[RMDB]
RNA sequence: GGGAACGACUCGAGUAGAGUCGAAAACGUACCUAGUACAUGGGUACACCAUGAUCGGAUCUAUAUCUAGGUACUGAGUACGUACCUAGUCAUGCAUGCAUGGAUAGGAUCCUAGGGAUCCGCUAGGAGUCAAGGCUAAUUUCGAUUAGCCUUGACUAAAAGAAACAACAACAACAAC
Reactivity to DMS in 0.01 (KOAc 150mM, MgCl2 10mM, bicine 150mM(pH8.5), 24C), signal-to-noise 5, nucleotides 027 to 126: c140g010u000a060c010c010u010a030g020u010a130c120a070u010g000g010g010u010a050c100a180c040c010a030u000g000a150u000c090g000g000a070u000c050u000a120u000a080u020c000u000a020g020g010u000a010c020u010g000a150g000u010a080c230g000u000a060c000c020u000a010g000u000c050a020u000g000c070a120u010g020c010a010u000g000g010a070u010a060g010g000a160u000c010c010u010a050g010g000g010a040u000c000c020g010c050u000a030g010g000
Reactivity to 2A3 in 0.01 (KOAc 150mM, MgCl2 10mM, bicine 150mM(pH8.5), 24C), signal-to-noise 4, nucleotides 027 to 126: c030g010u030a020c010c010u020a030g080u100a060c090a130u080g020g000g040u130a110c050a020c030c010a030u090g000a060u090c060g000g000a010u000c030u060a090u050a020u230c010u000a010g040g010u010a020c020u040g050a060g150u140a060c100g020u020a010c000c000u000a010g040u010c000a010u010g060c030a060u170g020c010a020u020g000g050a030u040a100g020g030a040u030c020c010u000a010g080g050g000a010u000c000c030g010c030u030a010g030g050